[RMDB]
RNA sequence: GGGAACGACUCGAGUAGAGUCGAAAAACGCGGGCGGCGUACCGUACAGAGAGAAGAAAAGGGGCAUAUUUCCCUGCUUGCAGCGAUGCGAGCAAAACAAAAAUUUCCAUGAAUACGGUUAGUAGCAAUCUGAAGAGAAAUUCGUUUCUCUUCAGAUAAAAGAAACAACAACAACAAC
Reactivity to DMS in 0.01 (KOAc 150mM, MgCl2 10mM, bicine 150mM(pH8.5), 24C), signal-to-noise 9, nucleotides 027 to 126: a090c080g000c060g010g000g010c050g000g000c030g010u000a040c040c020g010u000a040c080a090g010a140g010a080g010a070a070g010a060a040a090a090g000g000g000g020c210a080u020a100u020u010u000c000c010c010u010g010c010u000u000g010c010a010g000c300g000a150u000g000c020g010a000g010c000a020a030a060a070c210a020a050a050a070a120u010u010u010c010c030a070u020g010a100a120u000a040c050g000g010u000u020a060g010u010a070g010c100a100
Reactivity to 2A3 in 0.01 (KOAc 150mM, MgCl2 10mM, bicine 150mM(pH8.5), 24C), signal-to-noise 9, nucleotides 027 to 126: a000c040g010c030g030g030g010c060g030g000c020g030u040a030c000c020g010u020a000c050a010g170a000g030a000g030a160a020g070a030a100a020a020g020g000g010g000c060a030u050a120u170u080u060c000c000c000u000g000c000u000u010g000c000a010g020c020g100a060u020g000c000g000a000g000c010a000a070a000a010c060a010a050a030a020a030u080u090u020c040c020a080u110g060a070a040u110a030c020g030g000u050u070a040g030u050a020g070c030a030